[RMDB]
RNA sequence: GGGAACGACUCGAGUAGAGUCGAAAAGCGUCACUUUUAAUCACUUGUAUAACAAGUAGGACAGAAAGGUGGCUUGAAAGUCAAUCAUGUGAGAAUUCCAGAUAAAUUGACUUUGCUCACAACAAUCUGUUAUUCAUGUGACUAUCAACUGUCAUGACAGCAUUUACUCAUUCGUGAGUAAAUGCUGAAAAGAAACAACAACAACAAC
Reactivity to DMS in 0.01 (KOAc 150mM, MgCl2 10mM, bicine 150mM(pH8.5), 24C), signal-to-noise 1, nucleotides 027 to 156: g010c130g020u000c040a030c020u000u000u000u000a110a080u010c030a110c010u000u010g000u000a130u010a180a100c000a030a030g000u010a090g050g020a080c080a160g000a070a070a080g010g030u000g020g020c010u000u030g000a100a010a080g060u000c010a060a050u000c060a040u000g020u020g020a090g000a140a080u010u000c050c020a110g010a040u020a040a080a080u000u010g020a040c020u030u000u000g010c070u010c150a090c010a040a080c040a080a040u010c050u000g020u000u000a090u000u000c040a070u010g000u000g010a030c000u000a200u030c070a040a100c070u010g000u010c030a090u000g030a270
Reactivity to 2A3 in 0.01 (KOAc 150mM, MgCl2 10mM, bicine 150mM(pH8.5), 24C), signal-to-noise 3, nucleotides 027 to 156: g060c010g030u030c010a010c050u010u040u110u140a060a070u060c010a020c020u010u000g030u040a230u050a300a060c010a010a010g010u040a070g080g050a030c040a050g140a020a010a010g020g000u010g010g000c020u020u100g080a070a040a000g030u000c010a010a030u020c060a090u100g080u120g060a030g090a100a180u170u030c030c010a000g020a080u150a120a180a020u020u020g000a000c000u050u020u030g040c050u070c020a040c010a030a170c010a050a130u040c020u060g060u060u040a080u080u060c040a050u100g030u020g050a020c010u030a060u190c060a040a090c080u080g020u060c040a040u050g040a020

Structure probing data (DMS and 2A3) for a 207-nucleotide construct. DMS adducts were read by reverse transcription with MarathonRT. The reactions ran in a buffer of 150 mM KOAc, 10 mM MgCl2 and 150 mM bicine (pH 8.5), at 24 C. Reactivities are given for positions 27 through 156. For 2A3, 1,907 sequencing reads were counted.